[RMDB]
RNA sequence: GGGAACGACUCGAGUAGAGUCGAAAAACUCUCACCAGCUACGGUACUGUAGCUGAUUCUCGAGGAGUAGUCUCCGAGACUCAGGAGACGAGUCUCGCUAGUACUGAACUAGCAGUACUCCUGGAGUACAGUACCGUACUCCAGCGAGAGUGAGAGAGGUACUAAAUGACUUCGGUCAUUUAGUACCAAAAGAAACAACAACAACAAC
Reactivity to DMS in 0.01 (KOAc 150mM, MgCl2 10mM, bicine 150mM(pH8.5), 24C), signal-to-noise 2, nucleotides 027 to 156: a050c000u000c000u000c020a050c000c020a090g020c060u010a040c020g020g010u000a020c080u000g040u000a050g060c090u000g000a060u000u000c040u000c000g040a140g030g020a130g070u000a160g000u010c010u000c000c010g000a080g000a060c140u000c030a300g040g030a090g010a050c030g000a060g000u000c020u000c060g100c010u000a030g030u010a270c190u000g000a100a050c040u000a040g040c040a100g000u010a050c000u000c030c000u000g010g000a050g060u000a010c000a020g010u000a020c070c020g010u000a000c020u010c000c000a050g000c090g000a070g000a100g020u000g000a090g000a090g060a150
Reactivity to 2A3 in 0.01 (KOAc 150mM, MgCl2 10mM, bicine 150mM(pH8.5), 24C), signal-to-noise 4, nucleotides 027 to 156: a010c010u000c000u000c000a020c020c000a020g000c050u020a010c010g010g060u050a040c040u080g000u020a020g050c090u050g080a080u090u060c030u030c040g130a020g020g000a040g010u070a030g030u040c010u000c030c000g070a080g040a180c110u070c180a090g040g020a020g030a040c020g000a010g000u010c020u000c050g010c000u000a000g010u030a120c120u220g080a230a010c000u010a000g000c000a000g020u020a030c010u010c000c000u020g050g010a000g000u010a000c000a010g030u030a030c000c040g000u020a010c030u060c060c010a010g000c010g010a080g010a010g040u030g010a020g000a000g000a020
About this RNA:
The record gives the reactivity of an RNA of 207 nucleotides to DMS and 2A3. The RNA was probed in 150 mM KOAc, 10 mM MgCl2 and 150 mM bicine (pH 8.5) at 24 C. Values cover nucleotides 27 to 156. In probing experiments dimethyl sulfate is read out at A N1 and C N3, which are open when not base-paired. It was measured as part of the RMDB library OK3TST.